RNA sequence: GGGAACGACUCGAGUAGAGUCGAAAAGGUGAAGCUUCUGAUCCAACUAGCUGAUAGUUUGGUGGAAAAGGGUCAUGCCCAUGCGAGCGAUAUCAAGCAAUGGGUGGCGUCCGUGGAUCAGCGGUACCGUUAGCUGUUGUUUCGACAACAGCUAACGAAAAGAAACAACAACAACAAC
Reactivity to DMS in 0.01 (KOAc 150mM, MgCl2 10mM, bicine 150mM(pH8.5), 24C), signal-to-noise 4, nucleotides 027 to 126: g010g020u010g010a130a160g020c020u000u000c010u000g010a030u000c010c010a080a080c020u000a090g030c130u020g010a140u010a050g010u000u000u000g040g010u000g010g010a100a050a160a110g000g000g010u010c030a210u010g020c000c010c000a030u000g010c040g010a200g020c140g010a120u020a090u000c090a080a200g000c030a020a060u000g000g000g000u000g000g000c120g010u000c010c010g010u010g020g010a040u000c000a030g010c050g000g000u000a070c120
Reactivity to 2A3 in 0.01 (KOAc 150mM, MgCl2 10mM, bicine 150mM(pH8.5), 24C), signal-to-noise 3, nucleotides 027 to 126: g120g030u140g070a200a010g040c020u040u000c000u010g000a020u020c000c000a010a030c000u030a020g010c050u070g100a220u090a110g140u120u110u140g110g010u070g030g070a090a080a060a050g070g020g000u050c040a050u170g010c000c000c000a010u050g010c050g060a130g060c060g090a020u040a060u300c060a110a030g000c000a100a100u030g010g030g030u010g030g000c050g040u020c010c010g020u020g000g020a020u010c010a010g000c000g020g050u050a060c030
This 177-nucleotide RNA was probed chemically with DMS and 2A3. In probing experiments dimethyl sulfate is read out at A N1 and C N3, which are open when not base-paired. It was measured as part of the RMDB library OK2TRN. Values cover nucleotides 27 to 126. The 2A3 profile rests on 3,384 reads. For DMS, 3,591 sequencing reads were counted.